Structure probing data (DMS and 2A3) for a 177-nucleotide construct.
RNA sequence: GGGAACGACUCGAGUAGAGUCGAAAAGGAGACUCCAUCUUUACAGGCUGUACUGGCUCUUGGAACAAGGUCACUCAAAUUGCUAACAUGUUCUUGGAACAGACUCAGCAUUCCCUUAACUUUGUGGCAAUGAAAAAUUGUUCGCAAUUUUUCAUUGAAAAGAAACAACAACAACAAC
Reactivity to DMS in 0.01 (KOAc 150mM, MgCl2 10mM, bicine 150mM(pH8.5), 24C), signal-to-noise 8, nucleotides 027 to 126: g010g010a060g000a120c090u010c120c070a070u000c030u000u000u000a110c170a090g000g010c020u000g010u000a080c040u010g010g010c080u010c000u010u010g010g010a040a030c030a040a080g020g010u000c130a060c090u010c130a070a100a140u010u000g010c080u000a070a060c080a070u000g010u000u000c010u010u000g010g000a030a050c020a020g000a120c120u000c050a020g010c010a140u000u000c000c000c010u010u010a080a090c140u000u000u000g020u000g010g000
Reactivity to 2A3 in 0.01 (KOAc 150mM, MgCl2 10mM, bicine 150mM(pH8.5), 24C), signal-to-noise 6, nucleotides 027 to 126: g050g000a040g050a030c040u020c060c000a080u010c020u020u040u050a070c050a030g080g000c010u010g000u040a020c020u030g040g050c030u000c010u030u020g020g010a010a010c010a060a080g080g000u060c020a030c040u110c040a070a120a240u150u110g020c020u070a050a030c010a080u030g000u000u000c000u010u030g030g000a020a010c010a030g120a300c010u000c030a010g000c000a020u010u010c000c000c000u010u070a100a080c060u090u070u110g080u090g130g000
For 2A3, 8,279 sequencing reads were counted.
2A3 adducts were read by reverse transcription with SuperScript II with manganese.
The RNA was probed in 150 mM KOAc, 10 mM MgCl2 and 150 mM bicine (pH 8.5) at 24 C.